RNA sequence: GGGAACGACUCGAGUAGAGUCGAAAAUCGUGAUGCGCUUCGAGGCGGCAAACACAGCAGCCGUGACGAUCAUAAGUGACACGAGAACCGCGAGGAUCUGAUAGAGCAAGAUGCGGUUGGUAGCGCGACUGAGUGGUCAGUUCGCUGACCACUCAGUAAAAGAAACAACAACAACAAC
Reactivity to 2A3 in 0.01 (KOAc 150mM, MgCl2 10mM, bicine 150mM(pH8.5), 24C), signal-to-noise 4, nucleotides 027 to 126: u010c010g000u010g030a100u160g080c000g020c020u020u030c060g030a060g180g000c000g000g000c020a000a170a050c130a010c040a140g190c070a020g000c010c010g020u030g070a120c030g020a010u110c020a070u070a280a000g050u010g070a020c010a000c000g050a050g020a010a040c030c010g000c040g000a120g030g140a080u000c010u050g060a100u140a160g190a020g030c040a050a020g010a090u090g050c040g030g010u030u000g030g030u040a040g020c070g000c010g060
Reactivity to DMS in 0.01 (KOAc 150mM, MgCl2 10mM, bicine 150mM(pH8.5), 24C), signal-to-noise 3, nucleotides 027 to 126: u010c020g020u000g000a130u040g020c000g000c010u000u050c000g020a040g020g040c000g000g000c020a050a080a070c190a110c220a090g030c230a090g000c000c000g010u000g000a280c040g000a010u020c130a090u040a050a080g020u010g010a020c010a070c010g000a050g000a080a130c000c000g030c040g010a180g040g010a050u000c080u020g010a160u000a030g010a050g010c030a100a070g020a110u000g010c010g000g000u000u010g010g020u000a090g010c060g010c160g000
Overview
Chemical mapping of a 177-nucleotide RNA with 2A3 and DMS. For 2A3, 1,929 sequencing reads were counted. For DMS, 3,086 sequencing reads were counted. Values cover nucleotides 27 to 126. It was measured as part of the RMDB library OK1LIB.